[RMDB]
RNA sequence: GGGAACGACUCGAGUAGAGUCGAAAAUUUUAAAGCUCCACUUUUCCCAGAGGAAUUCCAGUGUCAGUUCAAUGGGUGACGAGCUGGACUCGUUCCUGGAAAGGAAUGUCAGGUAGCUAUGAUGCACUUUCAUGUGCUUACCUAUCAGCAUGGCUCCCGAUCCAUGUAGAUUCGUCUACAUGGAUCGAAAAGAAACAACAACAACAAC
Reactivity to DMS in 0.01 (KOAc 150mM, MgCl2 10mM, bicine 150mM(pH8.5), 24C), signal-to-noise 2, nucleotides 027 to 156: u020u010u000u010a020a150a120g010c020u000c040c030a050c050u010u000u000u010c010c000c050a230g000a200g030g010a080a140u000u010c020c010a110g020u010g020u000c060a080g010u000u010c040a090a150u010g030g010g000u000g000a080c030g020a110g050c000u000g010g020a150c170u000c040g050u000u010c000c030u000g020g050a110a190a070g010g010a050a050u000g000u000c060a130g020g010u000a040g010c040u010a060u010g000a050u000g000c050a090c050u000u010u000c090a130u010g030u000g020c010u000u010a030c070c020u000a110u010c010a080g040c010a110u000g010g020c020u000c020c010
Reactivity to 2A3 in 0.01 (KOAc 150mM, MgCl2 10mM, bicine 150mM(pH8.5), 24C), signal-to-noise 4, nucleotides 027 to 156: u130u130u040u060a090a130a010g030c010u020c020c020a060c050u060u040u010u030c030c000c010a050g020a020g090g030a050a050u140u000c040c020a030g030u040g150u180c070a070g020u060u100c080a180a110u140g130g010g030u120g020a020c030g000a020g000c000u020g030g010a030c030u030c110g050u030u000c000c000u020g000g030a110a060a030g040g030a080a010u070g070u080c030a030g000g030u070a010g000c020u000a020u050g070a050u110g040c020a010c060u140u240u180c070a040u220g000u020g040c000u030u050a040c010c010u040a100u140c030a010g050c030a030u020g020g000c010u020c000c000